An RNA of 177 nucleotides, treated with 2A3 and read out base by base.
The data come from the RNA Mapping Database (RMDB), library OK1LIB.
2A3 adducts were read by reverse transcription with SuperScript II with manganese.
For 2A3, 499 sequencing reads were counted.
The reactions ran in a buffer of 150 mM KOAc, 10 mM MgCl2 and 150 mM bicine (pH 8.5), at 24 C.
RNA sequence: GGGAACGACUCGAGUAGAGUCGAAAAGAAGGAUUAAUAAUGGGAACUAGAUGUGGAGAUAUAGACCCAGCUAUAUUACCAUUCUUAAUGAGAAAAGAAGGUUUAGAUGCUGAUGGAUUGGAUAAAUCGGUAAUGGACGUUUCGACGUCCAUUACCGAAAAGAAACAACAACAACAAC
Reactivity to 2A3 in 0.01 (KOAc 150mM, MgCl2 10mM, bicine 150mM(pH8.5), 24C), signal-to-noise 2, nucleotides 027 to 126: g100a020a030g060g040a100u000u000a020a140u060a020a000u020g000g000g000a090a020c040u040a140g050a070u060g170u170g130g000a000g060a010u060a020u010a160g210a060c000c000c000a020g000c000u020a000u020a020u000u070a030c000c000a060u020u020c000u000u120a030a030u070g000a000g060a020a110a000a000g050a010a010g050g010u000u090u190a040g020a020u110g060c130u220g000a020u020g000g100a120u050u030g000g000a040u180a070a130a100u000